[RMDB]
RNA sequence: GGGAACGACUCGAGUAGAGUCGAAAAGAUAUGGAUGCCGGGUUCGAAGAACUGGGUCAACUCGGAAACGAGUUGAGCCCAGGGAGAACAGGCAUCCUAAGUCAAAAGCGCGACUUCGGUCGCGCAACCGUACCCUUUAGUUCGCUAAAGGGUACGGAAAAGAAACAACAACAACAAC
Reactivity to DMS in 0.01 (KOAc 150mM, MgCl2 10mM, bicine 150mM(pH8.5), 24C), signal-to-noise 1, nucleotides 027 to 126: g000a020u000a300u000g000g050a000u000g020c000c050g030g050g000u000u010c000g000a130a290g000a050a240c000u000g000g020g000u000c000a020a000c000u000c000g010g000a100a060a230c000g030a020g000u000u000g000a070g030c010c000c000a000g000g000g020a090g030a010a010c010a290g020g050c000a000u010c000c010u000a000a100g000u010c010a100a110a240a190g020c000g040c010g000a000c020u000u010c300g000g020u010c000g010c000g000c000a050a010
Reactivity to 2A3 in 0.01 (KOAc 150mM, MgCl2 10mM, bicine 150mM(pH8.5), 24C), signal-to-noise 1, nucleotides 027 to 126: g020a040u150a040u020g030g000a000u010g020c020c010g300g270g080u000u010c100g180a300a070g010a300a110c000u000g000g010g020u020c010a000a010c000u010c030g030g000a070a060a040c000g010a000g050u010u030g040a070g050c000c000c010a000g020g020g000a050g000a010a010c010a010g010g020c000a000u000c000c000u000a000a010g030u000c030a040a000a100a140g030c010g030c010g000a010c020u000u150c300g090g030u000c000g000c000g000c000a000a010